RNA sequence: GGGAACGACUCGAGUAGAGUCGAAAAACAGAAUGAAAAGAUGGUAUCCUGUAGGAAGGUUAGGAACACCGGAGGAUGUAGCUCGCGCAGUAAUUUUUCUGGCCGAUUCCAAAAACUCAUUCAUCACCGGUACUACCCUAUACGUUGAUGGAGGCUAAUUACUCAGUAAUUUCGAUUACUGAGUAAUAAAAGAAACAACAACAACAAC
Reactivity to DMS in 0.01 (KOAc 150mM, MgCl2 10mM, bicine 150mM(pH8.5), 24C), signal-to-noise 1, nucleotides 027 to 156: a080c060a080g000a080a070u000g000a120a060a080a140g000a150u000g010g000u000a150u000c020c010u000g010u000a130g040g000a110a070g000g030u000u000a130g000g000a090a110c080a010c010c040g030g010a260g000g010a000u000g000u000a150g000c060u000c060g050c100g000c030a050g010u010a030a060u000u000u000u000u000c040u040g010g040c040c040g030a190u020u000c050c070a000a060a030a050a040c050u000c050a080u000u010c030a080u000c030a060c030c020g000g020u000a040c030u000a220c020c010c020u000a130u000a040c080g000u000u020g000a040u010g000g000a100g030g000c040u000a030
Reactivity to 2A3 in 0.01 (KOAc 150mM, MgCl2 10mM, bicine 150mM(pH8.5), 24C), signal-to-noise 3, nucleotides 027 to 156: a010c030a000g070a100a140u160g060a020a030a010a140g080a040u110g060g020u070a050u080c020c010u020g050u070a040g030g050a080a050g040g000u080u080a030g000g050a120a070c020a020c060c010g020g000a050g020g020a020u010g000u150a040g030c050u030c040g080c020g010c050a000g080u080a050a140u070u160u110u130u050c040u050g140g000c030c010g030a040u190u050c110c000a000a070a050a090a120c060u060c030a030u150u030c000a020u020c010a000c000c000g000g000u030a010c010u060a010c030c020c020u020a020u030a120c070g020u020u070g020a060u040g030g030a010g010g020c020u040a070
An RNA of 207 nucleotides, treated with DMS and 2A3 and read out base by base.
2A3 adducts were read by reverse transcription with SuperScript II with manganese.
The RNA was probed in 150 mM KOAc, 10 mM MgCl2 and 150 mM bicine (pH 8.5) at 24 C.
Source: RMDB library OK3TST, as collected in RNAgym.
The DMS profile rests on 2,488 reads.
For DMS the reverse transcriptase was MarathonRT.